[RMDB]
Source: RMDB library TTRDES, as collected in RNAgym. An RNA of 177 nucleotides, treated with DMS and read out base by base. For DMS the reverse transcriptase was MarathonRT. Conditions: 150 mM KOAc, 10 mM MgCl2 and 150 mM bicine (pH 8.5), 24 C.
RNA sequence: GGGAACGACUCGAGUAGAGUCGAAAAAAAGAUAUGGAUCGCGUAAGAGCUGAUGACCCAUAUUUAAAUAUGGUCGGAAACGACCAUAUGUGCGUAUGGCAAGGCUCUUGAUCGAUCCUAAGUCAAAUCCACGCUUAGAGUUCGCUCUAAGCGUGGAAAAAGAAACAACAACAACAAC
Reactivity to DMS in 0.01 (KOAc 150mM, MgCl2 10mM, bicine 150mM(pH8.5), 24C), signal-to-noise 1, nucleotides 027 to 126: a060a060a030g020a050u000a270u000g000g000a010u000c000g010c230g000u000a080a000g000a000g020c000u000g020a060u020g000a060c300c000c000a000u000a000u000u000u020a130a200a000u000a000u000g000g000u000c000g050g010a090a050a070c000g000a020c030c000a000u000a000u000g020u000g000c300g000u000a000u000g000g020c000a040a050g000g030c000u000c010u000u000g000a140u000c000g000a000u000c000c000u000a030a120g000u030c070a070a120a120
Reactivities are given for positions 27 through 126.